[RMDB]
RNA sequence: GGGAACGACUCGAGUAGAGUCGAAAAACCUUAUUUUGAGAAGCUGAGGGAUUUGGACCAUAGAAGCUUCAGCAACCGACUUUAAAUAGCACGGUGCUAAUACCAACGAGCAACUCGAAUGAUAAGUAAAACGUUGACAAGUUCGCUUGUCAACGAACCGUUUUUCUAUCUUCGGAUAGAAAAACGGAAAAGAAACAACAACAACAAC
Reactivity to 2A3 in 0.01 (KOAc 150mM, MgCl2 10mM, bicine 150mM(pH8.5), 24C), signal-to-noise 1, nucleotides 027 to 156: a000c110c030u160u170a300u090u180u060u050g060a020g000a040a000g050c010u040g060a050g020g000g000a100u130u130u120g030g040a000c000c000a040u050a230g060a040a000g060c000u030u070c010a000g000c030a010a020c020c000g010a030c010u060u100u190a060a170a300u170a170g030c020a000c080g000g030u030g000c000u000a010a020u050a080c070c030a090a030c050g030a020g030c020a000a090c050u030c020g050a030a100u080g050a010u010a150a000g030u020a030a210a020a020c000g020u000u000g000a000c000a000a020g000u020u070c210g040c150u000u000g010u000c000a000a000c000g000a000a000